Chemical mapping of a 177-nucleotide RNA with 2A3 and DMS. The RNA was probed in 150 mM KOAc, 10 mM MgCl2 and 150 mM bicine (pH 8.5) at 24 C. The 2A3 profile rests on 1,567 reads.
[RMDB]
RNA sequence: GGGAACGACUCGAGUAGAGUCGAAAAGACCCGCACGGGGGAGCCGUGUGGGCCUAAGAUGUGACGAGUAUCGUUCAUCCUGCAUGCCUUUACAGACACGAUUCAGAACAGAUGGUUAUGCUAUUUGUCUUACGUGUCCGUUCGCGGACACGUAAGAAAAAGAAACAACAACAACAAC
Reactivity to 2A3 in 0.01 (KOAc 150mM, MgCl2 10mM, bicine 150mM(pH8.5), 24C), signal-to-noise 4, nucleotides 027 to 126: g010a030c000c000c000g000c000a000c000g010g000g040g020g130a040g300c010c000g000u000g000u010g010g000g000c020c000u070a090a010g010a020u110g040u190g110a030c000g000a010g040u020a090u110c010g000u010u020c020a050u100c030c000u030g000c000a010u010g020c000c000u100u140u150a110c100a100g110a040c030a020c130g160a140u180u200c030a070g080a160a090c020a040g110a110u100g030g000u100u090a020u070g000c030u010a120u090u110u070g060
Reactivity to DMS in 0.01 (KOAc 150mM, MgCl2 10mM, bicine 150mM(pH8.5), 24C), signal-to-noise 1, nucleotides 027 to 126: g000a080c000c030c000g000c000a000c040g000g000g080g000g010a170g000c060c000g050u000g070u010g020g070g010c000c000u000a010a270g010a090u000g000u030g000a110c000g020a060g000u020a170u050c020g030u020u000c000a290u000c070c000u020g000c110a040u000g030c000c060u030u000u000a100c020a070g040a030c060a050c090g000a090u000u030c020a140g000a090a000c110a090g000a010u040g020g000u010u010a050u000g000c000u020a030u040u000u000g030
For 2A3 the reverse transcriptase was SuperScript II with manganese.
2A3 is a SHAPE reagent: it acylates the 2'-hydroxyl of flexible nucleotides of all four kinds.
For DMS the reverse transcriptase was MarathonRT.